[RMDB]
RNA sequence: GGGAACGACUCGAGUAGAGUCGAAAAACAGGGCCACCCUGUGUCUGGGUUGGGGCUGGGUCCUCAUGCUCACCACCUGGAUGGGCUCACCAAGGCCACUGCAUCUCCCACAGACCGGGGAAGAACACACAGUGACACAUCUCCAGUACGUCGCAUGACGGAACACUAUCUUCGGAUAGUGUUCCGUAAAAGAAACAACAACAACAAC
Reactivity to 2A3 in 0.01 (KOAc 150mM, MgCl2 10mM, bicine 150mM(pH8.5), 24C), signal-to-noise 1, nucleotides 027 to 156: a010c020a070g070g020g000c050c020a060c010c050c010u080g160u040g030u120c010u010g000g100g010u150u080g010g000g020g000c030u110g030g000g080u140c020c000u050c000a020u170g010c000u020c000a080c010c010a090c040c050u110g020g060a190u110g050g000g000c130u100c040a100c030c000a010a070g070g000c000c050a220c010u040g000c010a030u040c040u050c070c030c000a010c010a000g030a000c000c030g000g000g050g010a050a050g040a080a000c030a010c000a010c020a120g020u030g040a010c010a010c000a160u010c060u040c100c000a050g050u050a050c060g000u000c000g000c150a100u170g020